[RMDB]
This 207-nucleotide RNA was probed chemically with 2A3. The RNA was probed in 150 mM KOAc, 10 mM MgCl2 and 150 mM bicine (pH 8.5) at 24 C.

RNA sequence: GGGAACGACUCGAGUAGAGUCGAAAAUGGAUAAGGGUUCCUCAGCACUGCUGAUCAGCUGAGGGUUAGCCGGUCCUAAGUCUCACCGCAACUCGACUGAGACGAAAUGGGAAACAGGUUAAUAUUCCUGUGCCAUCAUGCAGUGAAAGUUGACGCCGCAGAGCUUAAGGUUCGCCUUAAGCUCUGCAAAAGAAACAACAACAACAAC
Reactivity to 2A3 in 0.01 (KOAc 150mM, MgCl2 10mM, bicine 150mM(pH8.5), 24C), signal-to-noise 1, nucleotides 027 to 156: u130g010g000a060u080a080a300g000g090g010u040u070c020c000u070c030a000g000c010a000c060u270g000c080u160g060a130u180c030a010g000c000u010g030a030g020g000g150u010u150a010g000c010c000g000g000u000c000c000u030a010a040g010u000c000u000c000a070c020c030g010c050a050a040c060u020c110g020a010c010u020g000a030g010a000c000g040a090a150a060u030g000g010g020a250a120a000c040a040g040g000u060u040a150a000u090a050u260u200c000c000u000g000u050g150c010c000a010u000c000a000u040g110c040a000g000u000g080a290a000a000g080u000u000g020a080c040g060c080c050